[RMDB]
RNA sequence: GGGAACGACUCGAGUAGAGUCGAAAACCCUAGUGCGCCGUUUGUCGAAAGGGAAGCCGGUUAAUAUUCCGGCACCUGGAUGUGGAUUCUCCACGGCAACGUAACUGAACGCGGAGACGUCGGCAGGUCUCGACGUGUAUUUCGAUACACGUCGAGAAAAAGAAACAACAACAACAAC
Reactivity to 2A3 in 0.01 (KOAc 150mM, MgCl2 10mM, bicine 150mM(pH8.5), 24C), signal-to-noise 2, nucleotides 027 to 126: c010c000c000u150a150g030u050g070c040g040c010c000g070u030u060u120g020u010c030g030a040a020a010g050g010g000a050a020g000c000c000g000g030u030u050a140a050u080a180u050u060c000c000g000g000c000a030c000c000u050g010g040a030u120g050u050g090g020a070u170u020c010u040c050c010a000c000g000g000c050a050a020c070g040u050a060a060c040u150g100a040a030c030g000c010g030g030a040g010a000c030g030u060c020g010g000c020a030g040g080
Reactivity to DMS in 0.01 (KOAc 150mM, MgCl2 10mM, bicine 150mM(pH8.5), 24C), signal-to-noise 4, nucleotides 027 to 126: c040c000c010u040a090g030u020g030c080g020c030c000g020u020u000u020g020u000c030g000a090a120a080g000g010g000a100a140g020c000c010g000g010u000u000a090a070u060a290u030u010c000c010g000g040c000a020c000c000u000g000g010a150u010g030u010g000g000a170u010u010c060u010c000c000a070c040g000g010c100a070a070c080g010u030a080a090c100u050g000a100a070c030g020c040g010g000a050g000a070c090g000u000c010g020g000c020a110g000g000
Conditions: 150 mM KOAc, 10 mM MgCl2 and 150 mM bicine (pH 8.5), 24 C. The record gives the reactivity of an RNA of 177 nucleotides to 2A3 and DMS. It was measured as part of the RMDB libraries RFM100 and RFMREP. The 2A3 profile rests on 1,411 reads. As a SHAPE reagent, 2A3 marks flexible, mostly unpaired nucleotides at the ribose 2'-OH. Values cover nucleotides 27 to 126.